[RMDB]
RNA sequence: GGGAACGACUCGAGUAGAGUCGAAAACUCAAAUUAGUGAUGCGUCAGUGUAGUGGAAUGUAAGUUGUAUUUUUUUCUAUACACUUUUUUGCAUAUCUCAAUCUGUUUAUACACACCAUCUACCACCAGUCAGUGCGUGAUUCGUCACGCACUGACUAAAAGAAACAACAACAACAAC
Reactivity to 2A3 in 0.01 (KOAc 150mM, MgCl2 10mM, bicine 150mM(pH8.5), 24C), signal-to-noise 2, nucleotides 027 to 126: c020u050c030a000a000a160u130u140a090g040u000g040a010u040g110c140g090u060c100a300g100u040g060u160a060g030u080g030g040a060a000u000g010u080a030a050g140u210u120g010u110a060u110u050u000u070u000u000u000c140u090a020u000a090c000a010c000u070u120u000u000u170u090g000c030a000u040a200u050c050u000c010a110a230u080c110u060g250u090u090u130a080u100a000c000a000c000a000c000c000a060u000c000u050a140c000c000a070c000c000